RNA sequence: GGGAACGACUCGAGUAGAGUCGAAAAGUAAGAUGAUUCGUCAUCUUACGAACCCGAUGAAGCGGCACAUACCGAGCUUCAUACAUCUUAGAGUGCAAAUAAUGGCGCGUGGUUUCGACCACGCGAAGAGUAACAUCUUGUUCGCAAGAUGUUACUCAAAAGAAACAACAACAACAAC
Reactivity to 2A3 in 0.01 (KOAc 150mM, MgCl2 10mM, bicine 150mM(pH8.5), 24C), signal-to-noise 9, nucleotides 027 to 126: g010u000a000a010g000a010u020g010a010u010u090c120g070u010c070a000u000c000u000u000a010c000g000a010a040c000c000c010g000a030u030g000a010a010g010c020g060g020c080a050c030a160u200a130c060c090g050a030g030c010u000u010c000a010u050a050c050a060u050c040u110u150a100g060a050g190u090g050c060a040a060a180u230a120a170u270g230g020c010g000c000g000u010g000g020u050u050u100c230g070a020c000c000a000c000g000c000g010a000a000
Reactivity to DMS in 0.01 (KOAc 150mM, MgCl2 10mM, bicine 150mM(pH8.5), 24C), signal-to-noise 6, nucleotides 027 to 126: g000u010a010a000g000a000u000g010a020u000u010c180g010u000c000a000u000c000u000u000a000c000g010a060a150c000c000c020g020a030u010g010a020a010g040c010g010g010c020a070c100a110u010a120c100c140g010a150g000c000u000u000c000a010u000a120c120a090u000c110u000u000a120g010a120g020u000g010c060a120a060a070u010a070a090u010g000g020c010g010c000g020u000g000g000u000u000u010c190g010a020c010c000a000c000g010c000g010a020a030